[RMDB]
RNA sequence: GGGAACGACUCGAGUAGAGUCGAAAAGAUAUGGAGAGCCGAUAAGGCAAUGUCGGAAACGACAUAUGCCUUUUGACGGCUCCUCCUAAGUCAAAGGUACCAGCGGCGUUCGCGCCGCUGGUACCAAGUUGACCAUAUAGUUCGCUAUAUGGUCAACAAAAGAAACAACAACAACAAC
Reactivity to 2A3 in 0.01 (KOAc 150mM, MgCl2 10mM, bicine 150mM(pH8.5), 24C), signal-to-noise 2, nucleotides 027 to 126: g000a030u080a030u120g000g010a020g010a000g000c040c040g030a110u050a250a050g010g010c050a010a000u010g000u000c010g020g000a070a020a060c020g010a010c000a000u060a210u090g000c020c000u070u080u020u050g260a090c060g000g000c000u000c000c000u030c010c000u040a060a000g010u050c030a140a010a090g000g000u010a000c000c000a000g140c150g070g020c100g040u180u300c300g020c040g060c110c070g100c030u020g060g020u020a020c020c000a000a000
Reactivity to DMS in 0.01 (KOAc 150mM, MgCl2 10mM, bicine 150mM(pH8.5), 24C), signal-to-noise 1, nucleotides 027 to 126: g000a030u000a300u000g000g000a060g010a080g020c000c000g000a170u000a020a010g000g000c010a030a000u000g000u000c000g020g010a070a130a170c010g010a000c000a010u000a060u000g000c000c000u000u010u030u000g020a120c130g000g000c000u010c160c020u000c010c010u000a050a100g010u010c030a090a110a090g020g030u000a020c040c030a060g030c000g050g020c060g050u000u020c260g010c040g080c050c010g000c000u000g020g000u000a010c000c010a000a040
An RNA of 177 nucleotides, treated with 2A3 and DMS and read out base by base. The reactions ran in a buffer of 150 mM KOAc, 10 mM MgCl2 and 150 mM bicine (pH 8.5), at 24 C. The DMS profile rests on 1,144 reads. 2A3 adducts were read by reverse transcription with SuperScript II with manganese.